An RNA of 177 nucleotides, treated with 2A3 and DMS and read out base by base. For 2A3 the reverse transcriptase was SuperScript II with manganese.
RNA sequence: GGGAACGACUCGAGUAGAGUCGAAAAGGGUUCAUUCCAUUCUUUUAUACAGAGAAAUCACGGUCGAGAUCAAAACUCAGAAGUCUGUCAGAUUCUCUCUCUCCGUCGUCUCAACCGUGUUUUUCUGGAUUGGAUUAGGAUUCGUCCUAAUCCAAUCAAAAGAAACAACAACAACAAC
Reactivity to 2A3 in 0.01 (KOAc 150mM, MgCl2 10mM, bicine 150mM(pH8.5), 24C), signal-to-noise 9, nucleotides 027 to 126: g090g010g010u140u200c040a050u160u010c020c000a030u030u010c010u030u070u010u050a180u030a080c010a000g030a000g020a020a020a010u210c010a010c010g000g010u020c020g000a000g000a030u070c080a030a080a080a100c070u060c070a040g030a120a010g100u040c050u090g160u100c050a040g020a180u160u020c020u000c000u000c000u000c000u030c070c020g110u110c030g010u000c020u000c010a020a000c000c000g000u000g000u010u000u000u000u000c000u000g000
Reactivity to DMS in 0.01 (KOAc 150mM, MgCl2 10mM, bicine 150mM(pH8.5), 24C), signal-to-noise 3, nucleotides 027 to 126: g000g010g000u030u010c090a100u010u010c020c050a210u010u000c000u000u010u030u000a130u010a300c020a010g000a010g000a000a030a030u050c020a000c020g020g000u010c010g000a020g000a000u020c120a080a030a090a080c080u010c100a070g010a120a070g010u010c040u000g000u010c110a110g010a100u010u000c060u010c040u020c030u000c030u000c010c040g000u020c190g010u000c000u000c010a030a000c000c000g000u020g010u000u000u010u000u010c000u000g020